RNA sequence: GGGAACGACUCGAGUAGAGUCGAAAAGAUAUGGAUCGUGGACGCUGGAAUUAAGUGAGAGAAAGGAGAUCGGAAACGAUCUCCUUUCUCUCUCAAAUUCCAGAACUACGUUUCACGAUCCUAAGUCCUAUGUCUCUGUGUUCGCACAGAGACAUAGAAAAGAAACAACAACAACAAC
Reactivity to DMS in 0.01 (KOAc 150mM, MgCl2 10mM, bicine 150mM(pH8.5), 24C), signal-to-noise 1, nucleotides 027 to 126: g020a090u020a260u010g010g000a010u010c010g140u000g000g000a000c060g020c000u020g000g010a020a010u020u000a130a110g010u000g010a030g010a000g000a000a030a010g010g000a040g020a010u000c000g040g000a100a100a240c000g000a030u000c000u000c000c000u000u000u000c000u000c000u010c000u010c010a100a070a070u000u000c000c000a010g000a080a100c130u010a300c030g000u010u010u010c010a010c000g010a010u000c000c000u020a020a100g000u000c030